[RMDB]
RNA sequence: GGGAACGACUCGAGUAGAGUCGAAAACGCGACGUGGCGUCGAUGUUCGAUGGCGUCGCCCGCAAGUAUGACCUGACCAAUACCGUGUUGUCCCUGGGCCAGGACCGGUAUUGGCGGCGAGCCACUCGAUCCCUCUCUCUUUCGAGAGAGAGGGAUCAAAAGAAACAACAACAACAAC
Reactivity to DMS in 0.01 (KOAc 150mM, MgCl2 10mM, bicine 150mM(pH8.5), 24C), signal-to-noise 2, nucleotides 027 to 126: c180g000c010g000a020c170g030u030g030g020c020g030u000c000g010a070u010g030u000u000c080g010a080u000g000g010c010g020u000c060g040c010c020c060g020c100a070a100g020u010a080u020g020a150c240c040u010g000a180c020c010a010a030u000a020c030c020g020u000g020u000u000g000u000c020c010c000u010g020g000g010c060c080a200g000g000a010c030c020g000g000u000a010u000u000g010g000c010g000g020c040g000a180g030c040c060a090c190u010c080
Reactivity to 2A3 in 0.01 (KOAc 150mM, MgCl2 10mM, bicine 150mM(pH8.5), 24C), signal-to-noise 2, nucleotides 027 to 126: c070g010c010g020a040c030g010u060g110g160c010g000u020c020g070a130u190g240u300u190c090g040a050u130g000g000c000g020u000c000g000c000c000c000g080c060a080a060g140u190a140u230g080a200c010c040u120g130a300c010c000a010a000u010a010c020c020g060u090g160u300u170g040u060c000c020c020u050g090g050g010c040c020a010g000g000a000c010c000g000g000u000a010u000u000g010g000c040g010g000c030g030a020g040c040c010a070c040u150c050
Structure probing data (DMS and 2A3) for a 177-nucleotide construct.
The reactions ran in a buffer of 150 mM KOAc, 10 mM MgCl2 and 150 mM bicine (pH 8.5), at 24 C.
For 2A3, 2,830 sequencing reads were counted.
It was measured as part of the RMDB library OK2TST.